[RMDB]
RNA sequence: GGGAACGACUCGAGUAGAGUCGAAAAGAUCAUUUUAGGUCAUGAAGCAGUUUAUUAUAUAUUGAAAUGCAUAAGACUUUCCAAUAUAAAAUGAGGUAGAAGAGAACAUAUAUUCUAAAGGAGUCACAAACACAGACAUAGUUCAAGGAAUAAGAAACGUACUAAUCCAUUUCGAUGGAUUAGUACGAAAAGAAACAACAACAACAAC
Reactivity to 2A3 in 0.01 (KOAc 150mM, MgCl2 10mM, bicine 150mM(pH8.5), 24C), signal-to-noise 2, nucleotides 027 to 156: g000a040u040c040a110u010u140u130u140a060g010g000u010c000a030u100g040a050a000g000c010a000g000u090u190u000a210u160u050a170u080a060u050a050u100u030g000a000a090a000u070g010c040a050u040a300a090g010a090c000u090u050u010c060c030a020a010u070a000u030a040a090a010a100u090g010a050g000g020u050a020g020a090a000g010a000g040a030a000c010a010u050a010u050a070u120u080c030u080a000a040a100g080g000a000g040u030c000a030c040a060a130a010c020a010c000a050g100a020c000a030u040a020g010u050u050c040a050a030g040g020a060a070u120a080a070g090a090a030a020
Reactivity to DMS in 0.01 (KOAc 150mM, MgCl2 10mM, bicine 150mM(pH8.5), 24C), signal-to-noise 1, nucleotides 027 to 156: g020a090u030c000a150u000u000u030u000a090g030g000u000c000a060u040g000a080a130g040c000a110g000u000u000u010a070u020u000a290u000a080u000a030u000u000g010a020a080a030u000g000c040a130u030a150a210g010a100c020u000u000u000c010c060a000a010u000a020u000a060a130a040a190u000g010a090g010g010u000a040g030a120a190g000a120g080a020a120c030a090u000a100u000a040u000u000c080u000a040a080a090g000g000a060g020u000c060a040c040a030a010a080c120a130c040a120g000a080c010a040u000a050g020u010u000c030a040a110g030g000a080a100u000a080a200g010a040a080a130